[RMDB]
An RNA of 177 nucleotides, treated with DMS and read out base by base. For DMS, 1,239 sequencing reads were counted. For DMS the reverse transcriptase was MarathonRT. The reactions ran in a buffer of 150 mM KOAc, 10 mM MgCl2 and 150 mM bicine (pH 8.5), at 24 C.

RNA sequence: GGGAACGACUCGAGUAGAGUCGAAAAGAUAUGGACCAGGUGGGCAGCGAAGAACAUCAUUUGGAGAAAUUAAUCGGAAACGAUUAAUUUCUCCAAAUGAUGGGAGCUGUCCACUGGUCCUAAGUCAGUCAAUAGUGUUGUUCGCAACACUAUUGACAAAAGAAACAACAACAACAAC
Reactivity to DMS in 0.01 (KOAc 150mM, MgCl2 10mM, bicine 150mM(pH8.5), 24C), signal-to-noise 1, nucleotides 027 to 126: g000a020u000a300u000g030g020a000c000c000a020g040g040u000g040g030g010c020a020g010c000g000a060a200g040a170a250c010a020u000c000a020u000u000u000g000g000a000g000a010a010a010u000u000a000a050u000c000g000g000a100a120a280c020g020a010u000u000a000a000u000u000u000c000u000c010c000a010a000a000u000g020a000u000g020g000g010a050g010c000u000g000u000c000c000a000c000u010g010g000u000c000c000u000a010a080g020u000c100a200